RNA sequence: GGGAACGACUCGAGUAGAGUCGAAAAUAAAAGAGUGCGUGGUAGCACAAACCAGACCAAUGAUAAGUGCAUGCUCGCACAAGUACAGCUUCGCCUGUACAAAGCGAACAACAACAACAACAAAAAAUCUAAGUAUUUGAUUCGUCAAAUACUUAGAAAAAGAAACAACAACAACAAC
Reactivity to 2A3 in 0.01 (KOAc 150mM, MgCl2 10mM, bicine 150mM(pH8.5), 24C), signal-to-noise 3, nucleotides 027 to 126: u130a000a080a010a000g140a020g030u010g000c020g010u090g050g070u150a020g020c000a000c020a010a090a000c030c000a020g140a110c070c060a110a170u090g050a030u070a200a030g000u010g000c010a040u170g010c030u000c020g000c000a000c020a020a010g010u010a010c000a010g010c030u090u180c100g050c050c000u000g000u020a040c030a050a030a000g070c060g030a030a010c000a010a000c000a010a000c000a010a000c000a050a000c020a030a080a010a000a010a010
Reactivity to DMS in 0.01 (KOAc 150mM, MgCl2 10mM, bicine 150mM(pH8.5), 24C), signal-to-noise 4, nucleotides 027 to 126: u000a070a080a130a110g010a150g040u000g010c020g030u020g020g010u010a070g010c000a010c000a050a190a130c070c040a060g020a170c210c240a090a110u000g010a060u000a060a270g010u000g010c030a090u010g010c030u000c010g030c000a010c040a070a120g000u000a010c010a010g000c070u020u010c190g020c140c000u000g010u000a010c040a090a100a120g000c100g010a040a050c020a030a020c020a020a000c050a020a030c080a000a010c030a010a070a110a060a080a080
An RNA of 177 nucleotides, treated with 2A3 and DMS and read out base by base. The reactions ran in a buffer of 150 mM KOAc, 10 mM MgCl2 and 150 mM bicine (pH 8.5), at 24 C. For DMS the reverse transcriptase was MarathonRT. Reactivities are given for positions 27 through 126. For 2A3, 4,137 sequencing reads were counted. It was measured as part of the RMDB library M2PK90. For DMS, 2,710 sequencing reads were counted. 2A3 adducts were read by reverse transcription with SuperScript II with manganese.